[RMDB]
RNA sequence: GGGAACGACUCGAGUAGAGUCGAAAACACAACCUCGAACCAAUUUGAAAUGCUGGCCAUUACUCCACAACAACAGCAAUAUUCACAACAUGAAGGUGCAUAUCAACCUUUUAAUUCGAAUUGGAUGAUGGGUGGUCUUGCAACCUUUGUGGGAUCCACUGUAUUUCUUAUUCGUAAGAAAUACAGUAAAAGAAACAACAACAACAAC
Reactivity to 2A3 in 0.01 (KOAc 150mM, MgCl2 10mM, bicine 150mM(pH8.5), 24C), signal-to-noise 9, nucleotides 027 to 156: c080a010c020a020a120c020c030u080c070g070a070a060c030c030a100a130u090u060u150g070a080a060a050u070g000c020u030g030g050c060c030a080u120u130a130c070u110c100c070a070c030a160a060c020a040a030c010a040g030c020a030a030u080a120u170u110c070a040c020a170a060c010a040u040g010a010a000g000g000u000g000c020a010u040a010u060c040a090a260c010c000u070u070u070u170a100a060u040u020c020g090a110a180u140u200g020g020a030u030g020a030u050g020g020g000u010g010g000u030c080u080u030g000c020a180a250c010c000u020u020u010g010u010g010g030g030a040u060c030c040
Reactivity to DMS in 0.01 (KOAc 150mM, MgCl2 10mM, bicine 150mM(pH8.5), 24C), signal-to-noise 4, nucleotides 027 to 156: c070a080c040a090a230c030c020u000c020g020a100a180c050c030a040a100u010u010u000g010a070a100a220u010g010c030u000g010g000c070c030a110u000u000a080c050u010c010c060a090c060a090a130c050a080a080c030a060g010c030a070a090u000a120u000u000c050a090c040a060a060c020a120u000g020a020a010g020g030u000g000c050a100u000a080u010c040a050a040c000c000u010u000u000u000a060a190u000u000c030g010a100a150u000u000g010g000a070u000g000a110u000g010g020g010u010g010g020u000c080u000u010g020c020a050a080c030c020u000u010u020g030u000g000g010g020a110u000c050c080